[RMDB]
RNA sequence: GGGAACGACUCGAGUAGAGUCGAAAAGAAAUGGUGUACAAUUGUUUGUAUUCAUUCAAUGUCUCCUUUUCAGAAAUUAGUUUAGAGUCGAAUACUGCAAUAAUUUUCAAGAGAUAGUUUUCAUCAGAUAAGAUUUUAUUUAGUGUAGAUACGAUGACUAGCUAGGAUGAUUCGUCAUCCUAGCUAGAAAAGAAACAACAACAACAAC
Reactivity to DMS in 0.01 (KOAc 150mM, MgCl2 10mM, bicine 150mM(pH8.5), 24C), signal-to-noise 2, nucleotides 027 to 156: g020a090a080a050u000g000g020u000g030u000a080c060a070a110u000u000g020u000u000u030g010u000a080u010u010c000a050u000u020c030a060a140u000g000u000c010u000c010c020u010u000u010u010c060a110g010a110a080a140u010u000a080g010u010u000u000a070g000a130g010u000c040g040a160a140u000a080c060u000g010c070a050a050u010a030a070u000u000u000u000c030a040a110g020a100g010a070u000a090g010u000u000u010u010c060a080u000c030a140g010a120u000a030a080g000a180u020u000u000u010a040u000u000u000a070g020u000g020u000a050g010a130u000a030c020g000a080u000g000a190
Reactivity to 2A3 in 0.01 (KOAc 150mM, MgCl2 10mM, bicine 150mM(pH8.5), 24C), signal-to-noise 2, nucleotides 027 to 156: g000a000a050a010u060g010g000u020g010u090a060c120a170a130u010u040g040u110u070u030g080u110a220u070u300c030a000u000u000c010a020a030u030g000u010c000u000c000c000u050u000u010u060c020a040g110a070a100a080u150u120a050g040u010u060u170a030g010a020g050u000c000g030a120a080u050a150c030u060g000c030a020a030u070a030a050u130u040u070u190c050a070a000g040a010g020a100u080a050g070u060u110u130u220c040a070u050c030a010g020a090u070a180a020g020a020u060u130u010u050a070u040u070u120a050g040u030g030u040a030g010a080u050a070c050g020a000u020g030a020
Record summary:
Structure probing data (DMS and 2A3) for a 207-nucleotide construct. The RNA was probed in 150 mM KOAc, 10 mM MgCl2 and 150 mM bicine (pH 8.5) at 24 C. The 2A3 profile rests on 979 reads. Reactivities are given for positions 27 through 156.